[RMDB]
RNA sequence: GGGAACGACUCGAGUAGAGUCGAAAAGAUAAUAUGAUGAUUACCAUUACCAAUAAGCAUAGUUCAACUGAAAUCUUCGGAUUGCUGAACGACAACCUUCUACCAUCUUUCACCCCUAUCUGAUAAACAGUCGGACAUGCUUCGGCAUGUCCGACUGAAAAGAAACAACAACAACAAC
Reactivity to 2A3 in 0.01 (KOAc 150mM, MgCl2 10mM, bicine 150mM(pH8.5), 24C), signal-to-noise 1, nucleotides 027 to 126: g030a020u280a000a060u220a190u230g190a120u080g030a000u000u300a140c080c000a010u180u000a000c080c080a010a140u090a030a230g180c230a060u060a050g000u000u050c000a030a040c010u230g010a100a030a000u270c140u080u020c080g190g000a050u000u060g000c010u040g000a000a000c030g030a000c060a000a010c000c020u000u160c000u010a060c070c070a050u000c000u000u060u060c030a040c000c000c000c000u050a000u190c050u060g010a120u300a000a040a000